[RMDB]
Structure probing data (DMS and 2A3) for a 177-nucleotide construct. For DMS the reverse transcriptase was MarathonRT.
RNA sequence: GGGAACGACUCGAGUAGAGUCGAAAAGAUAUGGAUCACUCCGUCGUACGAGGAUCGAGGAUCGGAAACGAUCCUCGGGAGUACGUGACGGAGGUGAUCCUAAGUCAAACGCGUGUUCGCACGCGAAUCAGUAAAAUGGGUUCGCCCAUUUUACUGAAAAAGAAACAACAACAACAAC
Reactivity to DMS in 0.01 (KOAc 150mM, MgCl2 10mM, bicine 150mM(pH8.5), 24C), signal-to-noise 7, nucleotides 027 to 126: g000a060u000a300u020g000g010a000u000c000a050c000u000c000c000g010u000c010g010u000a010c010g000a140g010g000a080u010c010g010a010g010g010a020u000c000g010g000a120a090a190c010g000a010u000c000c000u000c000g000g000g000a090g020u000a020c020g010u020g010a020c000g010g010a010g020g020u000g010a010u010c000c010u000a020a090g000u000c040a090a140a270c040g010c000g020u000g010u000u020c240g030c000a010c010g010c000g010a070a070
Reactivity to 2A3 in 0.01 (KOAc 150mM, MgCl2 10mM, bicine 150mM(pH8.5), 24C), signal-to-noise 6, nucleotides 027 to 126: g010a020u090a030u190g000g000a010u010c010a000c010u000c010c000g010u020c010g010u020a010c000g050a300g130g020a030u010c010g000a010g000g010a000u010c020g030g010a080a100a010c010g000a000u010c020c000u000c000g010g000g000a030g010u020a020c160g110u210g090a010c000g000g020a050g010g000u010g000a000u000c000c000u000a060a030g040u020c060a110a060a140c030g000c000g000u030g050u100u150c300g000c180a000c000g000c000g020a020a130

For 2A3 the reverse transcriptase was SuperScript II with manganese.
The data come from the RNA Mapping Database (RMDB), library TTRDES.